[RMDB]
RNA sequence: GGGAACGACUCGAGUAGAGUCGAAAAAGUACGGCUUUGUCCCUGUUCCGAUCAAUGCGGGGGAUCUGUUCAUCAUCCACGGACAGUUGGAGCAUAUGUCUCUGCCGAACCGCUCGGAGAAACCGAGGAAUGAAAGAUCCUUCGGGAUCUUUCAUUCAAAAGAAACAACAACAACAAC
Reactivity to DMS in 0.01 (KOAc 150mM, MgCl2 10mM, bicine 150mM(pH8.5), 24C), signal-to-noise 3, nucleotides 027 to 126: a020g010u000a130c050g020g000c110u000u000u000g040u010c010c000c010u000g010u000u000c020c020g000a070u010c220a100a040u000g020c020g020g000g010g010g000a060u010c030u010g000u010u000c040a130u000c110a120u000c180c160a100c220g000g000a040c030a020g000u000u020g010g000a030g020c040a190u030a140u010g000u000c000u020c010u010g040c300c040g010a050a180c020c020g000c020u010c010g000g000a080g000a030a050a070c020c010g000a220g000
Reactivity to 2A3 in 0.01 (KOAc 150mM, MgCl2 10mM, bicine 150mM(pH8.5), 24C), signal-to-noise 2, nucleotides 027 to 126: a020g040u060a010c020g070g040c060u040u030u080g060u120c040c000c000u050g030u030u000c000c000g020a100u150c170a190a100u300g020c000g000g040g000g020g010a040u070c020u020g000u050u000c000a120u070c020a080u020c090c060a080c100g000g000a020c010a020g040u170u180g090g010a010g000c050a050u070a080u300g170u060c000u000c010u060g020c040c000g020a000a030c000c010g000c010u010c000g020g000a030g000a060a040a020c000c010g010a030g010

An RNA of 177 nucleotides, treated with DMS and 2A3 and read out base by base. The reactions ran in a buffer of 150 mM KOAc, 10 mM MgCl2 and 150 mM bicine (pH 8.5), at 24 C. DMS adducts were read by reverse transcription with MarathonRT. Source: RMDB library OK2TST, as collected in RNAgym. 2A3 adducts were read by reverse transcription with SuperScript II with manganese.